[RMDB]
RNA sequence: GGGAACGACUCGAGUAGAGUCGAAAACGCGCUGGCGGUUUCUUCGGUGUCGGCGUCGGGGUGGUCGGUGCGGGCCAGCGUCCAUUGCAGCUCAGCGGGUUUGACGGUCAGCGCGGCCUCGAGCUGGUCAAGAAGGAGGGUUCGCCCUCCUUCUUGAAAAAGAAACAACAACAACAAC
Reactivity to DMS in 0.01 (KOAc 150mM, MgCl2 10mM, bicine 150mM(pH8.5), 24C), signal-to-noise 2, nucleotides 027 to 126: c100g010c060g000c010u000g010g000c020g000g010u000u000u000c040u010u000c050g020g010u010g000u010c070g030g010c040g020u010c100g010g000g010g030u000g020g010u000c050g000g030u010g020c060g020g030g020c020c030a060g020c030g020u010c060c050a110u000u010g010c040a090g010c040u010c020a100g010c120g000g020g000u000u000u010g010a070c030g020g020u010c110a060g000c040g020c020g010g000c010c010u010c100g000a050g020c020u000g000g000
Reactivity to 2A3 in 0.01 (KOAc 150mM, MgCl2 10mM, bicine 150mM(pH8.5), 24C), signal-to-noise 1, nucleotides 027 to 126: c030g030c000g000c030u010g000g040c070g100g050u060u040u000c050u100u090c080g040g070u070g080u130c070g060g040c010g000u010c040g000g030g000g080u080g030g030u060c080g060g040u090g020c070g010g030g020c020c040a010g060c000g010u000c000c020a060u030u130g100c000a010g000c000u040c050a040g000c080g020g000g010u070u100u170g030a060c050g050g040u180c030a030g010c000g020c000g030g010c000c000u000c020g000a000g040c020u070g020g100
Source information
Structure probing data (DMS and 2A3) for a 177-nucleotide construct. Conditions: 150 mM KOAc, 10 mM MgCl2 and 150 mM bicine (pH 8.5), 24 C. 2A3 adducts were read by reverse transcription with SuperScript II with manganese. For 2A3, 1,643 sequencing reads were counted.